[RMDB]
RNA sequence: GGGAACGACUCGAGUAGAGUCGAAAAGAUAUGGACAAUGAACUACUCCUGCUACUACUAUAUAUGUUCUAAGUCGGAAACGACUUAGAACAUAUACGAAUAGUAGAUAGGAGCAUUGUCCUAAGUCCUCUGCUUACAUGUUCGCAUGUAAGCAGAGAAAAGAAACAACAACAACAAC
Reactivity to DMS in 0.01 (KOAc 150mM, MgCl2 10mM, bicine 150mM(pH8.5), 24C), signal-to-noise 1, nucleotides 027 to 126: g000a100u010a290u000g030g010a030c000a000a030u000g000a110a020c170u010a300c010u000c010c020u000g000c000u000a000c000u000a000c100u020a300u000a000u010a000u000g050u000u010c000u010a000a000g030u010c000g030g000a140a040a240c000g010a000c010u000u000a000g000a000a000c010a030u000a000u000a000c170g000a040a050u000a000g040u000a000g000a070u010a020g040g000a020g000c000a000u000u000g000u010c000c020u000a030a090g040u010c060
Reactivity to 2A3 in 0.01 (KOAc 150mM, MgCl2 10mM, bicine 150mM(pH8.5), 24C), signal-to-noise 1, nucleotides 027 to 126: g050a110u090a010u270g030g030a040c010a030a010u030g050a070a070c110u190a140c030u300c020c020u000g010c000u000a010c010u010a000c120u010a010u000a000u010a010u160g000u010u000c000u000a000a060g000u000c040g000g000a150a140a030c000g000a000c000u010u000a000g000a000a010c000a000u000a010u000a000c000g070a110a230u030a010g050u000a010g100a240u180a040g030g010a000g010c020a000u040u000g010u070c000c000u010a130a020g090u040c010
This 177-nucleotide RNA was probed chemically with DMS and 2A3.